[RMDB]
RNA sequence: GGGAACGACUCGAGUAGAGUCGAAAAGUGAUCUGCCCACCUCAGCCUUGCAAAGUGCUGGGAUUACAGGUGUGAACCACUGUGCCCGGACUUUACUUUUUUCUAAAAAGAGAGUUUAUUUAAGGAAACACAACCAGGAAUUCGUUCCUGGUUGUGUAAAAGAAACAACAACAACAAC
Reactivity to DMS in 0.01 (KOAc 150mM, MgCl2 10mM, bicine 150mM(pH8.5), 24C), signal-to-noise 1, nucleotides 027 to 126: g010u000g000a030u000c010u000g010c030c000c050a090c090c010u010c020a020g000c010c010u000u000g020c300a040a020a010g030u010g030c000u010g000g000g010a100u040u010a190c200a090g000g000u020g010u000g010a050a100c050c000a010c000u010g010u000g000c000c000c010g010g000a060c010u010u000u000a050c010u000u000u000u000u000u060c080u100a010a010a030a020a020g010a110g000a060g000u010u020u000a110u020u000u030a150a140g000g020a050a140